[RMDB]
RNA sequence: GGGAACGACUCGAGUAGAGUCGAAAAGGUGUUUUCUUCAAGACAAGACAAAAGGAGAUAGAAGGUGUGGCCUCUUUCAUCUUUGAGAGUAAGAUCAUUGAAGAAGUAAUAAAACUUCCAGGUGUUCUACUACCAGUUGAUUCGUCAACUGGUAGUAAAAAGAAACAACAACAACAAC
Reactivity to 2A3 in 0.01 (KOAc 150mM, MgCl2 10mM, bicine 150mM(pH8.5), 24C), signal-to-noise 2, nucleotides 027 to 126: g130g030u070g060u040u080u090u020c030u050u020c020a040a030g020a030c010a040a030g020a020c020a030a160a010a040g050g000a040g000a030u070a060g090a090a000g050g050u120g100u110g170g120c000c020u030c030u050u070u040c020a130u000c040u040u070u100g120a100g020a000g070u040a040a010g030a150u040c050a140u030u060g000a050a020g000a010a000g040u030a030a230u070a120a140a020a040c040u110u040c020c000a030g170g000u030g070u100u070c020
Reactivity to DMS in 0.01 (KOAc 150mM, MgCl2 10mM, bicine 150mM(pH8.5), 24C), signal-to-noise 5, nucleotides 027 to 126: g010g020u010g010u000u000u000u000c010u000u000c030a050a040g000a070c100a130a130g000a060c070a040a080a100a140g010g010a050g000a050u000a080g010a040a030g010g020u000g010u000g020g010c060c030u000c020u000u010u000c020a030u000c020u000u000u000g010a130g020a210g010u000a060a090g000a080u000c020a060u000u000g000a040a070g010a020a020g010u010a030a080u010a050a060a100a060c070u010u000c010c030a150g010g030u000g000u000u010c070
Structure probing data (2A3 and DMS) for a 177-nucleotide construct.
2A3 adducts were read by reverse transcription with SuperScript II with manganese.
Conditions: 150 mM KOAc, 10 mM MgCl2 and 150 mM bicine (pH 8.5), 24 C.